[RMDB]
RNA sequence: GGGAACGACUCGAGUAGAGUCGAAAACAGCAACUUCAUCCGAAUAGCCACGGUCAGGCGAGUAGUUCAACUGCAAAUCUUGUGGGUAAAACCUCUUAAAAACAACACCAUGAGCUGUCAGGUAUCCUAGCGGGAGGACGUUCGCGUCCUCCCGCUAAAAAGAAACAACAACAACAAC
Reactivity to 2A3 in 0.01 (KOAc 150mM, MgCl2 10mM, bicine 150mM(pH8.5), 24C), signal-to-noise 1, nucleotides 027 to 126: c000a000g090c000a060a060c090u200u020c150a200u000c000c000g100a180a000u060a110g130c140c000a180c100g000g000u000c050a000g100g000c000g000a030g000u050a000g000u000u010c080a030a020c140u000g150c100a000a000a300u010c080u200u000g000u050g000g000g000u090a050a130a000a000c000c000u080c050u230u300a170a140a000a000a000c000a050a000c000a000c090c000a080u000g000a000g080c050u000g060u280c090a040g040g050u040a000u070c000c000
The record gives the reactivity of an RNA of 177 nucleotides to 2A3. The RNA was probed in 150 mM KOAc, 10 mM MgCl2 and 150 mM bicine (pH 8.5) at 24 C. Source: RMDB library OK1LIB, as collected in RNAgym. For 2A3, 382 sequencing reads were counted.